[RMDB]
RNA sequence: GGGAACGACUCGAGUAGAGUCGAAAACACAACUGCGAAGGGGGGACGGAGAAGGCUAUGUUGGCCGGGCGUCGGUUGUCCCGGUUUAAGCGUGUAGGCUGGUUUUCCAGGCAAAUCCGGAAUUGAAGUCAUUAAAGGCUUUCGAGCCUUUAAUGACAAAAGAAACAACAACAACAAC
Reactivity to DMS in 0.01 (KOAc 150mM, MgCl2 10mM, bicine 150mM(pH8.5), 24C), signal-to-noise 1, nucleotides 027 to 126: c070a060c080a060a000c110u000g000c060g000a120a090g000g010g000g000g000g020a010c020g000g000a080g000a130a070g000g000c060u010a050u000g000u000u000g010g000c000c000g000g000g020c300g030u000c150g000g000u010u010g010u000c030c000c000g040g030u000u000u000a020a040g010c070g020u000g020u000a070g010g010c010u000g010g010u000u000u000u000c010c030a050g010g000c060a030a070a060u000c030c020g000g000a110a070u000u000g000a080a130
This 177-nucleotide RNA was probed chemically with DMS. DMS adducts were read by reverse transcription with MarathonRT. Values are in units of 0.01, from 0 to 300, in steps of 10. The RNA was probed in 150 mM KOAc, 10 mM MgCl2 and 150 mM bicine (pH 8.5) at 24 C.